[RMDB]
RNA sequence: GGGAACGACUCGAGUAGAGUCGAAAAGAUAUGGAUGCUAACGUCGAUAAGCUAGGUUCGGAAACGAACCAUAGCUUUUGACGACGACUUAGCAUCCUAAGUCAAAAGCGGUUGUUCGCAACCGCAACGUCUAUACUUCGUUCGCGAAGUAUAGACGAAAAGAAACAACAACAACAAC
Reactivity to DMS in 0.01 (KOAc 150mM, MgCl2 10mM, bicine 150mM(pH8.5), 24C), signal-to-noise 3, nucleotides 027 to 126: g000a020u000a090u010g000g010a010u000g000c000u000a010a020c270g010u000c010g000a090u020a020a020g030c010u000a010g000g000u000u000c020g030g000a020a010a040c000g000a010a000c000c000a020u000a000g000c000u000u010u000u010g010a240c300g000a150c010g000a050c080u000u000a020g010c000a000u000c000c000u000a000a030g000u000c010a060a100a140a130g000c000g030g000u000u000g020u000u000c230g010c000a010a000c000c000g010c010a030a040
Reactivity to 2A3 in 0.01 (KOAc 150mM, MgCl2 10mM, bicine 150mM(pH8.5), 24C), signal-to-noise 3, nucleotides 027 to 126: g020a010u030a020u080g030g000a000u000g020c000u010a060a040c190g000u010c030g110a300u070a300a010g000c000u010a000g000g010u000u000c000g000g000a000a020a020c000g010a010a000c010c000a020u000a000g000c010u010u000u030u160g160a070c090g020a010c000g010a000c010u010u010a010g010c000a010u000c000c000u010a000a000g010u010c020a040a040a140a100g010c010g000g010u010u030g060u080u180c300g000c140a010a000c010c000g000c000a000a000